[RMDB]
RNA sequence: GGGAACGACUCGAGUAGAGUCGAAAAGGAAUCGACAGUAGAGUGUAUCAUGUCAGUAAGCAUGCCGGGGAAUGGUGGUUUACCCCGUUAUCAAAUGAUUACCGACCAAUAAUUGGCGACACUCGUUAGGCCCGUCCACACUUCGGUGUGGACGGAAGAGACCACUUACGUUCGCGUAAGUGGUCUCAAAAGAAACAACAACAACAAC
Reactivity to 2A3 in 0.01 (KOAc 150mM, MgCl2 10mM, bicine 150mM(pH8.5), 24C), signal-to-noise 1, nucleotides 027 to 156: g060g020a050a080u050c050g080a040c050a040g070u120a040g010a000g000u020g000u030a050u150c070a020u140g060u010c040a010g040u070a070a000g010c010a020u070g010c070c010g010g000g000g030a010a070u060g080g010u020g020g040u070u070u130a130c000c000c000c000g040u050u050a110u080c000a060a080a050u040g010a020u040u030a040c020c010g040a010c050c030a000a030u270a140a090u160u100g030g020c070g010a010c010a000c010u040c010g050u040u040a020g030g080c000c000c000g000u000c000c000a000c000a000c020u000u070c190g130g010u000g000u000g000g000a000c000g010g000a010a000
The record gives the reactivity of an RNA of 207 nucleotides to 2A3. Reactivities are given for positions 27 through 156.